[RMDB]
RNA sequence: GGGAACGACUCGAGUAGAGUCGAAAAAGCUCAGCAAGAUGCAGAUCUCAAAAGGCGGAAUUGCGGUCGUUGUUCGAUGCUGACGGCAGCAUUAGCGACUUUAAUUACCAAUCACUUACGAUUAACCGGAGAGUAAGACAUUCGUGUCUUACUCUCCAAAAGAAACAACAACAACAAC
Reactivity to 2A3 in 0.01 (KOAc 150mM, MgCl2 10mM, bicine 150mM(pH8.5), 24C), signal-to-noise 3, nucleotides 027 to 126: a000g040c030u020c020a040g050c070a120a040g000a070u080g000c000a020g020a150u010c020u000c040a130a140a040a000g070g060c040g040g050a040a040u020u030g010c020g000g000u020c030g020u000u020g080u120u190c060g010a030u050g000c020u030g030a170c110g150g200c030a010g000c030a020u070u040a020g020c010g000a030c000u090u060u020a060a050u050u020a200c040c010a040a040u070c030a010c090u060u180a040c080g100a110u150u100a110a010c070c050
Reactivity to DMS in 0.01 (KOAc 150mM, MgCl2 10mM, bicine 150mM(pH8.5), 24C), signal-to-noise 3, nucleotides 027 to 126: a110g000c020u010c020a130g030c120a080a090g010a070u010g020c090a060g000a070u010c030u010c080a070a050a050a070g000g000c080g040g000a040a060u000u000g010c160g000g020u000c030g010u000u010g020u010u000c180g020a040u000g010c030u000g010a140c190g010g010c030a030g000c000a020u000u010a060g000c000g020a040c020u000u000u000a090a060u010u000a040c060c040a060a060u010c090a140c110u010u020a070c160g010a030u000u010a110a120c220c140
This 177-nucleotide RNA was probed chemically with 2A3 and DMS. It was measured as part of the RMDB library OK2TRN. The reactions ran in a buffer of 150 mM KOAc, 10 mM MgCl2 and 150 mM bicine (pH 8.5), at 24 C. High DMS reactivity at an A or C suggests that its Watson-Crick edge is free. For DMS, 1,982 sequencing reads were counted.